[RMDB]
RNA sequence: GGGAACGACUCGAGUAGAGUCGAAAAGAUAUGGAAGCAUGAGAGGGAGCCAAUAAUCGGAAACGAUUAUUUGGCGAGGAUCUCUUCAUGCUUCCUAAGUCAAAAGCUGAGCGUUCGCGCUCAGCAAUCUCUAAAACGAGUUCGCUCGUUUUAGAGAAAAAGAAACAACAACAACAAC
Reactivity to DMS in 0.01 (KOAc 150mM, MgCl2 10mM, bicine 150mM(pH8.5), 24C), signal-to-noise 2, nucleotides 027 to 126: g010a040u000a300u010g000g000a020a000g020c000a010u000g000a040g010a020g000g000g030a080g000c000c010a020a010u010a010a010u010c000g000g000a090a080a270c020g010a010u000u000a000u000u010u010g060g010c010g020a040g000g020a030u010c000u000c010u020u010c010a010u000g000c010u000u010c000c000u000a010a060g000u010c040a170a090a150a130g000c000u010g000a020g030c000g000u000u010c300g030c020g030c000u000c010a000g010c000a010a010
Reactivity to 2A3 in 0.01 (KOAc 150mM, MgCl2 10mM, bicine 150mM(pH8.5), 24C), signal-to-noise 2, nucleotides 027 to 126: g010a010u050a010u140g010g020a000a000g000c010a000u010g010a010g020a010g070g030g010a020g010c010c000a000a000u000a000a010u000c000g020g040a070a050a050c000g000a000u010u000a020u070u160u170g000g000c020g000a040g020g020a020u050c030u000c000u080u050c000a000u010g000c000u000u000c000c000u000a000a000g020u000c010a020a000a110a190g000c000u000g000a010g020c020g080u150u210c300g060c000g010c140u000c000a010g000c010a010a020